[RMDB]
RNA sequence: GGGAACGACUCGAGUAGAGUCGAAAAACUGUUGAUUCCUCACAGGGUUCAGAAUACCAGUACGUUAUCUUCUGUCAAACAGCAGAUACGGCACAUGCUAACAACAUUAACAGAUUUAAUGUUGCAAGUUGUAUUGUGUCUUCGGACACAAUACAACAAAAGAAACAACAACAACAAC
Reactivity to DMS in 0.01 (KOAc 150mM, MgCl2 10mM, bicine 150mM(pH8.5), 24C), signal-to-noise 2, nucleotides 027 to 126: a060c090u000g030u000u010g020a150u000u000c070c060u000c090a140c140a140g020g000g020u000u020c060a080g010a110a090u020a090c070c030a060g000u000a020c010g020u000u000a010u000c030u000u000c020u020g010u000c290a080a080a300c010a000g000c080a030g020a000u000a020c060g020g020c090a020c060a060u000g010c100u000a090a170c010a000a000c000a010u000u000a000a020c110a300g060a100u010u000u000a000a020u000g020u000u000g020c100a060a060
Reactivity to 2A3 in 0.01 (KOAc 150mM, MgCl2 10mM, bicine 150mM(pH8.5), 24C), signal-to-noise 1, nucleotides 027 to 126: a000c050u040g060u040u050g060a110u150u020c020c000u020c020a050c040a090g050g010g040u010u020c030a010g000a110a120u050a160c010c020a000g050u050a070c040g030u050u100a010u010c010u020u000c010u020g020u070c140a090a070a100c000a050g030c010a030g000a010u010a010c000g000g060c020a000c010a100u140g000c010u090a090a000c000a000a000c000a000u010u020a050a020c020a050g130a140u090u120u000a030a000u010g000u000u020g000c000a080a040

This 177-nucleotide RNA was probed chemically with DMS and 2A3. Reactivities are given for positions 27 through 126. Source: RMDB library 15KREP, as collected in RNAgym.